Annotation:
Chemical mapping of a 177-nucleotide RNA with DMS and 2A3. The reactions ran in a buffer of 150 mM KOAc, 10 mM MgCl2 and 150 mM bicine (pH 8.5), at 24 C. For 2A3, 2,172 sequencing reads were counted. Reactivities are given for positions 27 through 126.
RNA sequence: GGGAACGACUCGAGUAGAGUCGAAAAUUUCGUAACUACGAUUGUGUAUACGACGACGAGUACUAGUUCUGUCUGAUGCAUAUGGUAGUACCACAAUCGCAUGAAAUUAGGUGCGGCCAAGUACAGCCGUCAGGAUCUAGUUCGCUAGAUCCUGACGAAAAGAAACAACAACAACAAC
Reactivity to DMS in 0.01 (KOAc 150mM, MgCl2 10mM, bicine 150mM(pH8.5), 24C), signal-to-noise 3, nucleotides 027 to 126: u000u010u000c040g020u000a070a120c070u010a070c010g000a040u010u010g030u000g000u000a150u000a040c070g000a030c070g000a060c080g010a100g030u010a030c110u000a190g000u000u000c050u000g040u000c020u000g020a100u000g010c030a120u000a070u000g010g010u010a060g020u000a110c230c060a030c120a010a020u000c020g020c030a110u000g000a040a050a070u000u000a060g040g010u000g020c080g000g000c030c030a040a110g030u000a040c110a240g000c080
Reactivity to 2A3 in 0.01 (KOAc 150mM, MgCl2 10mM, bicine 150mM(pH8.5), 24C), signal-to-noise 3, nucleotides 027 to 126: u060u090u050c010g010u040a080a060c010u050a020c060g130a060u020u150g000u000g040u020a050u000a080c040g000a010c020g030a000c030g040a050g080u040a120c080u040a020g100u120u020c050u100g090u000c050u090g030a060u060g040c030a040u040a040u150g120g020u020a020g010u010a040c000c030a040c050a030a040u040c040g040c020a020u070g110a120a160a070u150u090a110g060g030u040g010c040g010g010c010c020a080a030g060u040a090c040a060g050c010